[RMDB]
RNA sequence: GGGAACGACUCGAGUAGAGUCGAAAAGGGGUCAAAUUUGAGUGGCUACUUCGCUUGGAUUUAUAGGCUGAAGCCUCCACGGCCUAUUGUCAGCGAAGGGCCACAAUGAUGAUUUGACGGAGGCACCCAAAACCCGUGUACUUCGGUACACGGGUAAGAUUAAUACUCAGUUCGCUGAGUAUUAAUCAAAAGAAACAACAACAACAAC
Reactivity to DMS in 0.01 (KOAc 150mM, MgCl2 10mM, bicine 150mM(pH8.5), 24C), signal-to-noise 1, nucleotides 027 to 156: g030g020g040g020u000c010a020a000a040u000u000u000g020a030g020u000g010g020c010u000a080c000u000u000c000g000c020u000u010g030g030a090u020u020u000a050u000a020g020g050c020u000g010a020a130g020c020c020u010c010c020a300c010g000g000c000c000u000a050u000u000g010u010c040a090g030c020g020a040a080g030g010g010c020c010a010c000a020a060u010g010a160u000g000a040u000u000u000g000a070c000g010g020a070g110g060c020a080c020c030c030a070a050a110a130c000c000c020g050u010g020u000a010c000u000u010c300g020g040u000a010c000a010c020g000g020g020u010a000a010
Reactivity to 2A3 in 0.01 (KOAc 150mM, MgCl2 10mM, bicine 150mM(pH8.5), 24C), signal-to-noise 5, nucleotides 027 to 156: g080g010g040g000u000c000a000a010a000u010u010u020g010a010g030u000g000g010c010u150a300c010u300u000c010g020c030u140u300g160g000a050u220u300u110a010u070a000g000g000c000u020g050a090a000g000c010c000u000c000c000a020c010g010g000c000c000u000a000u000u030g040u050c140a040g000c010g000a000a000g000g010g000c020c000a000c010a000a010u010g000a000u010g000a000u000u000u010g000a010c010g000g000a000g000g000c010a040c000c010c000a040a100a030a040c000c000c000g000u010g000u000a010c020u020u060c200g090g000u000a000c000a000c000g000g000g000u000a000a000
Structure probing data (DMS and 2A3) for a 207-nucleotide construct. The DMS profile rests on 4,206 reads. For 2A3, 7,806 sequencing reads were counted. The RNA was probed in 150 mM KOAc, 10 mM MgCl2 and 150 mM bicine (pH 8.5) at 24 C. The data come from the RNA Mapping Database (RMDB), library RNAMAK.